An RNA of 177 nucleotides, treated with DMS and 2A3 and read out base by base. Source: RMDB library OK1LIB, as collected in RNAgym. Conditions: 150 mM KOAc, 10 mM MgCl2 and 150 mM bicine (pH 8.5), 24 C. For DMS, 18,216 sequencing reads were counted.
RNA sequence: GGGAACGACUCGAGUAGAGUCGAAAAGGGGUCUCAAAGGGGCGUGGAAACGCAUAAGAACUCUUGAAUGGAAAAGAGAUGUAACUCCAGUUCCUUCGGAAUCGGUAGUCAAUCCUAUUUCCGAUAGUAGUUACGGAAUUUUCGAAUUCCGUAACUAAAAAGAAACAACAACAACAAC
Reactivity to DMS in 0.01 (KOAc 150mM, MgCl2 10mM, bicine 150mM(pH8.5), 24C), signal-to-noise 8, nucleotides 027 to 126: g010g010g010g000u000c040u000c070a060a070a120g010g010g010g020c020g000u020g010g060a100a100a040c040g010c020a060u030a110a130g000a070a150c010u000c020u000u010g010a110a170u030g010g000a060a070a040a070g000a080g020a110u010g020u010a100a070c070u010c000c020a110g000u000u010c000c000u000u000c040g000g000a020a010u010c260g000g000u010a040g010u180c250a190a130u020c010c010u010a080u010u000u010c000c000g000a030u040a080g010
Reactivity to 2A3 in 0.01 (KOAc 150mM, MgCl2 10mM, bicine 150mM(pH8.5), 24C), signal-to-noise 8, nucleotides 027 to 126: g020g000g000g020u040c040u040c120a080a060a030g090g030g000g000c040g020u030g060g060a090a170a010c020g000c010a030u060a120a070g090a090a050c000u020c000u050u040g130a150a110u240g080g140a070a110a060a020g060a000g010a010u120g070u130a040a020c020u000c000c000a020g010u010u010c000c000u010u010c010g000g000a010a020u010c020g040g000u020a030g100u030c010a010a070u050c000c010u020a030u040u150u050c000c010g010a010u030a020g130